[RMDB]
This 207-nucleotide RNA was probed chemically with 2A3. The reactions ran in a buffer of 150 mM KOAc, 10 mM MgCl2 and 150 mM bicine (pH 8.5), at 24 C. Values cover nucleotides 27 to 156.
RNA sequence: GGGAACGACUCGAGUAGAGUCGAAAAGUCGGCGCGUACGUGCUGUACACGGACAACGCGUCCACAUUGGUCUAUGCGCUCGACGCAUUGCAGGCGAUGGAAUUUUUCAUCAAUACGAUGGGUAACUGGAUGACGGCCAGCCAGAUGUACAGCAUCAGUUUACGCCCAGAUUCGUCUGGGCGUAAACAAAAGAAACAACAACAACAAC
Reactivity to 2A3 in 0.01 (KOAc 150mM, MgCl2 10mM, bicine 150mM(pH8.5), 24C), signal-to-noise 2, nucleotides 027 to 156: g080u040c040g020g040c020g000c000g000u040a130c050g040u040g000c000u000g020u010a000c000a000c020g010g000a060c040a150a060c120g010c050g030u000c000c020a050c020a020u040u070g030g040u000c060u080a030u030g000c010g000c020u100c100g150a220c010g010c010a030u010u100g110c130a080g040g030c070g050a010u020g000g100a100a100u000u080u030u030u210c010a020u010c030a010a140u180a120c080g020a050u020g030g060g000u110a130a000c010u020g040g000a050u090g040a050c070g010g010c020c000a010g020c010c000a100g060a120u000g020u020a040c000a010g000c010a010u100c010a040